The record gives the reactivity of an RNA of 177 nucleotides to 2A3 and DMS. DMS adducts were read by reverse transcription with MarathonRT. Reactivities are given for positions 27 through 126. It was measured as part of the RMDB library OK2TRN. The RNA was probed in 150 mM KOAc, 10 mM MgCl2 and 150 mM bicine (pH 8.5) at 24 C.
RNA sequence: GGGAACGACUCGAGUAGAGUCGAAAAUGGGGCAAUCGAGCCGCAGUUCUUCGCGGCGUUGCUGAGCGGGCUCGGCUUGUCGGCCGCUGACGUGCCGACUCAGCUCGAUGUGGCCGGCUACCCGCAGUAGCCAUGAGGAGUUCGCUCCUCAUGGCUAAAAAGAAACAACAACAACAAC
Reactivity to 2A3 in 0.01 (KOAc 150mM, MgCl2 10mM, bicine 150mM(pH8.5), 24C), signal-to-noise 1, nucleotides 027 to 126: u190g030g000g020g040c000a000a020u060c090g130a040g000c000c000g090c030a000g080u170u080c070u070u140c080g000c020g000g000c000g030u010u070g000c000u030g030a010g000c010g020g040g000c010u000c050g000g050c000u000u150g060u060c000g010g030c050c070g000c050u050g030a010c070g080u160g190c010c000g110a150c030u010c060a000g010c080u040c010g000a050u120g050u080g300g030c000c000g010g000c020u070a030c000c020c030g000c000a010g110
Reactivity to DMS in 0.01 (KOAc 150mM, MgCl2 10mM, bicine 150mM(pH8.5), 24C), signal-to-noise 2, nucleotides 027 to 126: u010g030g000g030g020c030a060a010u010c080g000a090g030c010c000g000c020a110g010u010u030c190u010u000c130g030c010g010g030c020g020u000u000g000c010u000g020a070g020c020g030g000g010c090u010c000g010g020c040u000u000g030u000c030g010g010c060c080g020c220u010g020a080c180g000u000g000c040c020g010a110c030u010c080a040g000c010u010c040g020a070u010g020u000g010g010c010c010g030g000c040u000a100c030c000c030g010c220a100g010